[RMDB]
RNA sequence: GGGAACGACUCGAGUAGAGUCGAAAAUGAGAAGCAUUCGUGCUUCUCAGAAAUGCUGCCCUAAGAGGACCUGGGGGUGUCUGGGCUGCUAAACUCAUCAGCUAACCGCGAUCUUCGGAUCGCGGAAACAAAAUAGUCAGUUCGCUGACUAUUUUGUAAAAGAAACAACAACAACAAC
Reactivity to DMS in 0.01 (KOAc 150mM, MgCl2 10mM, bicine 150mM(pH8.5), 24C), signal-to-noise 4, nucleotides 027 to 126: u000g000a000g000a010a010g000c000a030u000u000c210g030u000g030c000u000u000c000u000c000a010g000a090a090a070u000g000c060u010g000c020c000c020u000a150a180g010a120g010g000a060c040c020u000g020g020g010g000g030u000g000u000c040u000g010g010g010c020u000g010c050u010a050a070a100c060u000c060a120u020c100a100g010c140u020a090a220c000c000g020c010g000a010u000c000u000u010c150g020g000a010u000c000g020c000g000g000a000a030
Reactivity to 2A3 in 0.01 (KOAc 150mM, MgCl2 10mM, bicine 150mM(pH8.5), 24C), signal-to-noise 3, nucleotides 027 to 126: u030g010a000g000a000a000g000c010a000u040u150c220g090u040g010c000u000u000c000u000c000a000g000a000a080a010u100g000c010u030g010c000c000c020u080a210a090g130a090g180g030a030c030c080u130g090g020g040g000g020u010g010u000c040u050g020g030g000c000u010g020c020u020a010a030a040c040u030c050a140u040c030a100g060c040u080a090a060c010c010g000c000g020a000u000c000u050u070c200g100g000a000u000c000g020c000g020g010a010a000